Notes
Chemical mapping of a 177-nucleotide RNA with 2A3 and DMS. The 2A3 profile rests on 541 reads. The reactions ran in a buffer of 150 mM KOAc, 10 mM MgCl2 and 150 mM bicine (pH 8.5), at 24 C. It was measured as part of the RMDB library OK1LIB. DMS adducts were read by reverse transcription with MarathonRT.
RNA sequence: GGGAACGACUCGAGUAGAGUCGAAAAAGCCCUGUUUGUAUGAUUUGAAUCGAGGGUGACACUUCAGGCCGAUUGUUAUAGUUGUUUGGUUUGUGGCCUGGUGGCUUUAACAGCGGUGUGUUAUGGCCAAUAUUUAUUAAUUCGUUAAUAAAUAUUGAAAAGAAACAACAACAACAAC
Reactivity to 2A3 in 0.01 (KOAc 150mM, MgCl2 10mM, bicine 150mM(pH8.5), 24C), signal-to-noise 1, nucleotides 027 to 126: a000g020c010c000c000u000g060u010u080u060g120u050a160u070g120a200u010u160u160g130a100a070u100c050g050a060g010g050g010u080g030a040c020a010c060u110u160c000a010g060g000c000c000g060a040u020u120g040u100u090a080u010a120g000u000u030g030u020u070u010g100g040u030u000u130g070u080g020g030c000c020u010g010g010u010g010g000c000u000u000u060a060a000c030a020g040c010g020g040u040g000u010g020u070u020a070u050g010g000c000
Reactivity to DMS in 0.01 (KOAc 150mM, MgCl2 10mM, bicine 150mM(pH8.5), 24C), signal-to-noise 5, nucleotides 027 to 126: a160g000c020c000c000u010g000u020u010u030g020u010a050u010g000a080u010u010u020g010a080a110u000c030g010a080g010g000g020u010g000a090c050a050c040u010u010c030a030g000g000c010c010g010a090u020u010g010u010u020a080u020a120g010u000u000g000u000u010u010g010g010u010u010u020g020u010g010g010c010c000u000g000g020u010g000g000c000u000u000u000a020a020c040a060g010c060g000g010u010g010u000g010u000u010a040u010g000g000c070